[RMDB]
RNA sequence: GGGAACGACUCGAGUAGAGUCGAAAACGAUGUUUCGACAUCGAAUUACCGUAGGAGCCAAUUGUUGCAGGGAGUUAUACUCCUUCGAAAGAGGGAGUAAUUCUCCCUGAACUACAACAAAUGGCUCCUAAACGGGCAGUAGAGCAUUCGUGCUCAACCCUACGCCAUAGUUCGCUAUGGCGUAGGGAAAAGAAACAACAACAACAAC
Reactivity to 2A3 in 0.01 (KOAc 150mM, MgCl2 10mM, bicine 150mM(pH8.5), 24C), signal-to-noise 1, nucleotides 027 to 156: c050g000a040u050g060u060u240u130c250g120a040c060a070u100c000g040a010a200u160u120a060c000c000g000u000a050g000g010a010g010c000c000a050a160u010u070g010u000u000g010c000a010g010g010g000a000g000u070u000a050u000a190c010u070c000c070u000u050c000g040a010a070a050g000a020g000g010g000a000g000u000a040a030u010u000c000u000c000c000c000u010g000a000a000c000u190a000c000a000a000c000a000a010a050u000g000g000c000u000c000c000u040a000a000a000c000g000g040g090c010a110g060u220a040g010a000g000c020a020u030u200c300g220u060g010c000u050c000a040a050
Record summary: This 207-nucleotide RNA was probed chemically with 2A3. Conditions: 150 mM KOAc, 10 mM MgCl2 and 150 mM bicine (pH 8.5), 24 C. Reactivities are given for positions 27 through 156.